[RMDB]
RNA sequence: GGGAACGACUCGAGUAGAGUCGAAAAAGAGAAUGAGAAUUGGCCAGUAAUUCUUUGGUAUCAAAAACUGUCUAUUAGCAAACAGUUGACAACAUGAUUGGACUAAUAGCCGCUCACAUUCCAUGGGGUUGCGAGUAGAAUUCGUUCUACUCGCAACAAAAGAAACAACAACAACAAC
Reactivity to DMS in 0.01 (KOAc 150mM, MgCl2 10mM, bicine 150mM(pH8.5), 24C), signal-to-noise 2, nucleotides 027 to 126: a050g000a090g000a090a050u000g000a080g010a050a060u010u000g010g030c070c070a100g010u010a030a020u000u000c020u000u020u010g010g010u000a050u000c060a080a050a070a060a070c040u000g020u010c050u010a120u000u000a070g020c130a090a050a120c020a020g030u000u020g000a110c180a030a050c130a070u010g000a080u010u000g000g010a110c020u000a020a030u000a060g000c050c070g040c030u000c060a030c080a080u000u000c000c010a140u000g000g020g000
Reactivity to 2A3 in 0.01 (KOAc 150mM, MgCl2 10mM, bicine 150mM(pH8.5), 24C), signal-to-noise 1, nucleotides 027 to 126: a040g100a010g010a030a020u100g010a030g020a090a080u080u070g070g000c060c020a050g060u080a000a120u090u050c000u100u050u080g020g020u120a040u230c040a000a170a040a040a000c010u000g020u020c050u060a110u070u090a090g040c060a010a100a100c030a030g030u010u050g030a050c080a130a010c040a150u140g020a080u090u020g030g030a050c000u010a000a010u000a050g010c020c010g000c030u020c000a050c000a010u030u030c010c000a030u070g070g000g100
Chemical mapping of a 177-nucleotide RNA with DMS and 2A3. For 2A3 the reverse transcriptase was SuperScript II with manganese. Conditions: 150 mM KOAc, 10 mM MgCl2 and 150 mM bicine (pH 8.5), 24 C.